An RNA of 207 nucleotides, treated with DMS and 2A3 and read out base by base. The RNA was probed in 150 mM KOAc, 10 mM MgCl2 and 150 mM bicine (pH 8.5) at 24 C.
[RMDB]
RNA sequence: GGGAACGACUCGAGUAGAGUCGAAAAAAGGAGGAAAUGCCUGUUGCCUGUACGAACACUUCCUGGAAGUAACAUACAUUGCUCUUCUUACAUUGCAUUGGUCAAAACUUAGGCAUGUGACCACAUCAGCUUGCAGAGCAGGCUGGGAAAUGUAGUAUAAAUUAUUACGGUUCGCCGUAAUAAUUUAAAAAGAAACAACAACAACAAC
Reactivity to DMS in 0.01 (KOAc 150mM, MgCl2 10mM, bicine 150mM(pH8.5), 24C), signal-to-noise 3, nucleotides 027 to 156: a040a060g020g010a060g010g010a070a070a080u000g020c040c000u000g030u000u000g000c000c000u000g040u000a080c070g010a100a130c080a070c040u000u000c020c030u010g010g020a090a080g010u000a080a120c060a110u010a050c060a110u010u000g010c030u000c010u000u010c040u000u000a040c050a060u000u000g000c050a120u000u010g000g000u000c030a050a050a070a080c040u000u000a090g020g030c020a070u010g030u000g000a040c010c010a030c100a120u000c030a050g010c020u000u000g030c010a230g020a240g040c010a020g020g000c010u010g010g010g000a020a060a030u000g010u010a090g010u000a220
Reactivity to 2A3 in 0.01 (KOAc 150mM, MgCl2 10mM, bicine 150mM(pH8.5), 24C), signal-to-noise 3, nucleotides 027 to 156: a000a000g060g010a020g010g060a140a040a000u070g020c010c040u060g070u070u060g010c030c020u040g040u080a050c060g020a110a020c020a020c080u070u060c050c040u050g020g030a050a050g050u080a080a040c010a020u200a040c040a060u080u110g000c020u010c010u090u000c010u030u050a050c020a120u070u080g010c010a040u000u100g030g010u050c030a010a040a090a140c070u140u080a040g010g070c030a030u100g040u030g050a010c010c020a030c030a080u100c010a000g020c000u030u060g010c030a010g010a010g190c030a010g010g000c000u010g000g000g040a040a070a040u100g010u050a050g040u060a040